Conditions: 150 mM KOAc, 10 mM MgCl2 and 150 mM bicine (pH 8.5), 24 C. An RNA of 207 nucleotides, treated with 2A3 and read out base by base. 2A3 adducts were read by reverse transcription with SuperScript II with manganese. For 2A3, 390 sequencing reads were counted.
RNA sequence: GGGAACGACUCGAGUAGAGUCGAAAACAUUCUGAAAGGUUAUAAAGACCAGAAAUCUAUAAAGUGGACGACCAUAAGAAACAGUUCCAUCCUUAUGUAACACAGUUUGGAAAAACCUCAGUUACUUUAGUUGACAGCUCCAAUCCUCUAAAACAUAGUGCACUAAUGGAUUCGUCCAUUAGUGCACAAAAGAAACAACAACAACAAC
Reactivity to 2A3 in 0.01 (KOAc 150mM, MgCl2 10mM, bicine 150mM(pH8.5), 24C), signal-to-noise 1, nucleotides 027 to 156: c010a010u060u000c000u060g130a200a130a060g040g000u020u020a090u120a200a200a040g030a000c010c010a000g030a080a180a000u130c130u120a220u090a130a150a020g180u050g010g000a040c000g050a010c020c030a040u040a050a040g030a010a050a030c040a030g000u080u010c010c000a040u010c000c030u110u110a060u050g000u090a040a000c000a000c010a120g110u080u130u120g020g000a040a000a000a000a000c030c000u050c020a000g010u000u000a000c000u160u060u020a040g000u020u040g030a080c060a040g030c000u060c010c030a050a140u030c000c010u090c000u100a000a120a030a050c160a070u300a150